[RMDB]
RNA sequence: GGGAACGACUCGAGUAGAGUCGAAAAAGGUGGGAUUCCCAGAACAGGGUUUUAACCUAACAUUGUGCUUGCCUCCAUUUCCUCUCUUCUAUUUGGUUACUUUCCUGAAGCCCAGUGACCAAUAGUAAGGAAGUUUCAGCAGACAGUGGUCUGAGUCAAGUUGUACCGUUUUCGAACGGUACAACUUAAAAGAAACAACAACAACAAC
Reactivity to 2A3 in 0.01 (KOAc 150mM, MgCl2 10mM, bicine 150mM(pH8.5), 24C), signal-to-noise 1, nucleotides 027 to 156: a010g040g010u090g040g000g030a030u050u080c010c000c010a000g050a040a060c140a050g010g000g000u040u120u170u270a080a100c020c030u030a060a060c040a130u120u160g080u080g050c030u020u070g000c000c030u000c020c020a100u050u020u030c000c000u030c010u000c050u060u060c010u000a060u120u070u080g020g020u000u000a030c000u030u080u100c050c060u070g110a140a040g050c000c020c020a010g000u000g000a030c010c000a040a040u040a010g060u070a000a020g030g040a040a000g020u000u050u110c020a020g000c020a040g010a010c010a090g130u150g150g030u170c020u040g030a050g060u140c060
Reactivity to DMS in 0.01 (KOAc 150mM, MgCl2 10mM, bicine 150mM(pH8.5), 24C), signal-to-noise 1, nucleotides 027 to 156: a030g040g000u000g020g010g000a200u000u000c020c010c010a300g000a080a140c110a130g000g010g040u000u020u000u000a070a130c030c010u000a070a140c090a120u000u000g040u000g000c050u000u010g020c020c020u000c040c040a190u020u000u010c030c020u000c020u010c070u020u040c040u000a030u000u000u000g040g020u000u010a050c010u000u000u000c030c000u000g020a080a160g020c050c000c060a120g020u000g030a030c010c000a040a050u000a040g000u020a000a070g030g000a050a050g020u000u000u000c020a090g020c100a120g010a010c030a110g020u010g000g010u000c030u000g000a130g020u020c100